[RMDB]
RNA sequence: GGGAACGACUCGAGUAGAGUCGAAAAUGACCCAGCUGCGGCCGCCGGUCGAGAUCGAGGCCGAGCUAUUCGGCCACAGCGGCUGGCAGCCGGGCGAUGCGUGGAUGGCCGAGACCACGCUGGGCCGGCCCAUGCCUUGUUUCGACAAGGCAUGGGCAAAAGAAACAACAACAACAAC
Reactivity to DMS in 0.01 (KOAc 150mM, MgCl2 10mM, bicine 150mM(pH8.5), 24C), signal-to-noise 3, nucleotides 027 to 126: u010g010a110c010c000c000a130g010c000u000g010c010g000g000c010c030g000c020c020g000g000u000c070g000a090g020a090u010c160g000a130g020g020c020c000g020a020g010c280u000a110u010u000c010g010g020c010c000a070c030a150g010c000g000g010c000u000g010g010c020a020g010c000c030g000g000g010c020g010a070u000g000c010g030u000g010g000a140u000g010g000c030c050g000a140g000a170c020c010a020c020g000c010u000g010g010g000c030c000g000
Reactivity to 2A3 in 0.01 (KOAc 150mM, MgCl2 10mM, bicine 150mM(pH8.5), 24C), signal-to-noise 2, nucleotides 027 to 126: u140g040a060c000c000c000a010g000c010u230g100c000g000g000c000c000g010c000c000g030g030u050c030g050a070g030a140u210c120g020a100g010g030c020c000g000a010g000c000u110a220u160u100c000g000g000c000c060a040c000a030g010c000g000g000c000u000g090g010c000a000g000c010c000g010g000g000c030g000a030u080g000c000g000u010g000g030a100u070g130g060c100c080g040a060g010a040c000c000a020c010g000c010u000g010g070g000c010c020g040

Source: RMDB library OK2TRN, as collected in RNAgym. This 177-nucleotide RNA was probed chemically with DMS and 2A3. Reactivities are given for positions 27 through 126. The DMS profile rests on 3,962 reads. For DMS the reverse transcriptase was MarathonRT.